[RMDB]
RNA sequence: GGGAACGACUCGAGUAGAGUCGAAAAGGUAUUUAUCUGUGUGUCUUUAAAUUCCGUGGUUUUAGGCAUUCUCUGCUGAUUCUUCCCUAAGCCUGGUGGGUGAGUCUGGGCCCUGUGCUCUGUGAGGGACAGUCUCCCCAUUCGUGGGGAGACUGUCAAAAGAAACAACAACAACAAC
Reactivity to 2A3 in 0.01 (KOAc 150mM, MgCl2 10mM, bicine 150mM(pH8.5), 24C), signal-to-noise 1, nucleotides 027 to 126: g000g020u040a000u100u230u030a060u260c040u000g050u010g040u020g010u090c000u000u180u030a090a110a110u140u040c090c100g030u120g000g000u010u070u130u100a110g040g000c050a030u100u070c000u020c000u020g080c000u000g000a030u150u000c000u030u050c000c030c000u030a080a040g000c000c000u000g000g050u080g030g070g000u090g000a020g030u000c030u090g030g030g010c000c000c030u040g000u040g000c000u000c000u090g030u030g000a070g030g060
Description:
An RNA of 177 nucleotides, treated with 2A3 and read out base by base. 2A3 adducts were read by reverse transcription with SuperScript II with manganese. The reactions ran in a buffer of 150 mM KOAc, 10 mM MgCl2 and 150 mM bicine (pH 8.5), at 24 C. Values cover nucleotides 27 to 126. It was measured as part of the RMDB library OK1LIB.